[RMDB]
RNA sequence: GGGAACGACUCGAGUAGAGUCGAAAAUCGUAAUGGUGCGUAUUGUUCAUUAAUUCAUCCCCAACCAGUGGAGGAUCUCCUGUCCGUGGCUAUCAUAAAGUAACCUGGCGCUCAUUACCGCCGAGACAAAAUUACCACUAUUCGUAGUGGUAAUUUUAAAAGAAACAACAACAACAAC
Reactivity to DMS in 0.01 (KOAc 150mM, MgCl2 10mM, bicine 150mM(pH8.5), 24C), signal-to-noise 9, nucleotides 027 to 126: u030c090g010u020a070a050u010g000g020u010g010c050g010u010a080u010u020g010u010u010c070a090u020u020a070a090u020u010c100a110u010c020c000c010c060a100a120c100c070a060g010u010g000g010a100g000g000a070u010c030u010c020c010u010g000u010c030c040g000u010g010g010c040u000a040u010c080a080u020a060a070a090g010u010a070a090c060c040u010g000g010c020g010c050u010c060a050u020u020a070c120c030g000c010c020g010a100g000a080c180
Reactivity to 2A3 in 0.01 (KOAc 150mM, MgCl2 10mM, bicine 150mM(pH8.5), 24C), signal-to-noise 9, nucleotides 027 to 126: u110c030g020u070a050a040u080g060g000u080g030c040g030u070a070u080u190g070u090u070c080a070u080u170a120a060u090u070c040a050u070c020c010c000c010a020a060c030c020a040g030u060g060g030a060g030g030a040u020c010u020c030c010u030g030u040c010c030g050u040g040g000c020u050a040u100c040a070u120a180a120a020g070u050a040a060c010c020u020g030g000c020g000c010u030c020a040u030u090a050c010c010g030c000c020g030a030g000a020c060
The record gives the reactivity of an RNA of 177 nucleotides to DMS and 2A3. Source: RMDB library OK1LIB, as collected in RNAgym. The 2A3 profile rests on 30,431 reads. For DMS the reverse transcriptase was MarathonRT. Conditions: 150 mM KOAc, 10 mM MgCl2 and 150 mM bicine (pH 8.5), 24 C.